An RNA of 177 nucleotides, treated with DMS and 2A3 and read out base by base.
The RNA was probed in 150 mM KOAc, 10 mM MgCl2 and 150 mM bicine (pH 8.5) at 24 C.
The data come from the RNA Mapping Database (RMDB), library M2PK50.
2A3 adducts were read by reverse transcription with SuperScript II with manganese.

[RMDB]
RNA sequence: GGGAACGACUCGAGUAGAGUCGAAAACAUCGCGACUUCGGUCGCGAUGAAAGUUGUGGUCCCUCACGCAUAACAAAUCCCAAUGAGGGUAGGUGACUGCAAAACGACACGCCUUCGGGCGUGUCAAAUUAUUGCAACAAUUCGUUGUUGCAAUAAUAAAAGAAACAACAACAACAAC
Reactivity to DMS in 0.01 (KOAc 150mM, MgCl2 10mM, bicine 150mM(pH8.5), 24C), signal-to-noise 7, nucleotides 027 to 126: c010a010u000c000g030c010g000a010c000u000u020c180g040g010u000c000g020c000g000a000u000g000a040a070a070g020u000u000g020u000g000g000u010c010c000c000u000c040a160c070g000c030a050u000a080a070c140a060a110a120u000c010c010c010a090a080u010g010a050g000g010g010u010a030g010g020u010g000a090c060u000g000c100a060a050a100a100c150g000a010c000a000c000g020c000c000u000u010c190g040g000g010c000g000u000g000u000c000a000a040
Reactivity to 2A3 in 0.01 (KOAc 150mM, MgCl2 10mM, bicine 150mM(pH8.5), 24C), signal-to-noise 2, nucleotides 027 to 126: c020a000u010c000g000c000g020a000c010u030u070c280g110g000u000c010g030c000g020a000u000g000a000a000a000g080u010u040g000u010g020g020u030c010c030c000u010c000a020c030g080c010a070u090a220a060c040a090a080a080u070c010c000c020a040a100u210g040a120g020g000g020u010a010g000g090u110g050a030c030u050g000c010a000a030a070a060c090g000a000c000a000c000g000c010c000u040u050c240g090g000g000c020g000u010g000u000c000a010a000